[RMDB]
RNA sequence: GGGAACGACUCGAGUAGAGUCGAAAAUCCUAAGUCAGUCCGAGAGCUCGAAGGCUUGGAUUUACAUUCGGAAACGAAUGUUGUCAGCCUUCAGAGCUCGUUUGACGACUGAUAUGGAAAAACUUCUGUGCUCUGAUUCGUCAGAGCACAGAAGUAACUACCUCAUUAACUUCGGUUAAUGAGGUAGAAAAGAAACAACAACAACAAC
Reactivity to DMS in 0.01 (KOAc 150mM, MgCl2 10mM, bicine 150mM(pH8.5), 24C), signal-to-noise 1, nucleotides 027 to 156: u000c000c020u000a080a260g020u010c040a070g000u010c000c030g000a260g000a050g020c000u000c000g030a040a030g000g020c000u010u000g080g000a030u000u000u010a050c000a040u000u010c000g030g000a220a150a300c000g010a030a000u000g030u010u000g000u010c010a050g000c000c010u020u000c010a080g020a000g000c010u000c000g000u000u020u000g030a190c090g000a060c000u000g000a020u000a230u000g010g020a090a110a110a150a060c000u000u000c010u000g010u000g040c010u010c000u010g000a060u000u000c300g010u000c030a020g000a040g000c000a000c000a000g000a010a010g000u000a010a070
Reactivity to 2A3 in 0.01 (KOAc 150mM, MgCl2 10mM, bicine 150mM(pH8.5), 24C), signal-to-noise 2, nucleotides 027 to 156: u000c000c000u020a070a010g040u000c010a000g010u050c040c020g070a050g000a000g100c000u000c010g010a000a000g020g000c060u110u200g130g020a050u300u160u110a000c000a010u000u000c030g020g020a140a030a010c030g000a000a050u000g000u060u050g010u010c050a000g000c000c000u050u000c090a110g000a010g010c010u040c000g000u000u000u000g030a010c000g000a000c000u010g000a000u010a090u120g020g030a030a070a060a090a070c000u000u020c000u010g000u000g000c000u010c000u000g010a020u040u010c100g040u000c080a000g000a010g000c000a000c000a000g000a000a000g000u000a000a000